[RMDB]
RNA sequence: GGGAACGACUCGAGUAGAGUCGAAAACGUCGCCAGUGGCCGCCAGCAGCGGGUCCCGCGCCUGCGGUGUGGAUAACGCUUCGACCGUGGCGUAGAAGCGCGUACCGACCAAUACCCCGGCGGCGCCGACAGGCUGUAUGUUCGCAUACAGCCUGUCAAAAGAAACAACAACAACAAC
Reactivity to DMS in 0.01 (KOAc 150mM, MgCl2 10mM, bicine 150mM(pH8.5), 24C), signal-to-noise 4, nucleotides 027 to 126: c050g020u000c020g020c010c020a090g030u010g010g030c050c020g010c020c020a110g010c080a070g000c030g000g000g000u010c010c000c020g000c040g000c070c010u010g030c020g000g010u010g000u050g030g000a100u060a120a170c030g000c020u010u000c010g010a070c030c030g030u030g010g020c110g040u000a040g000a080a030g010c000g000c080g000u000a230c070c010g000a140c130c130a120a100u040a170c030c030c010c030g010g020c010g000g010c010g010c260c130
Reactivity to 2A3 in 0.01 (KOAc 150mM, MgCl2 10mM, bicine 150mM(pH8.5), 24C), signal-to-noise 9, nucleotides 027 to 126: c010g010u010c010g000c020c040a090g040u170g130g010c000c020g030c030c050a050g020c030a010g010c050g020g030g050u060c020c010c000g030c010g010c000c020u040g010c010g000g040u050g050u130g030g020a150u170a300a020c020g000c020u010u020c010g040a050c020c040g250u250g150g020c130g010u000a020g010a020a010g010c000g000c010g010u040a050c020c010g030a050c040c000a070a060u170a200c000c010c000c010g000g000c000g000g010c000g000c010c030
This 177-nucleotide RNA was probed chemically with DMS and 2A3.
The 2A3 profile rests on 12,440 reads.
As a SHAPE reagent, 2A3 marks flexible, mostly unpaired nucleotides at the ribose 2'-OH.
For DMS, 7,696 sequencing reads were counted.
The RNA was probed in 150 mM KOAc, 10 mM MgCl2 and 150 mM bicine (pH 8.5) at 24 C.
2A3 adducts were read by reverse transcription with SuperScript II with manganese.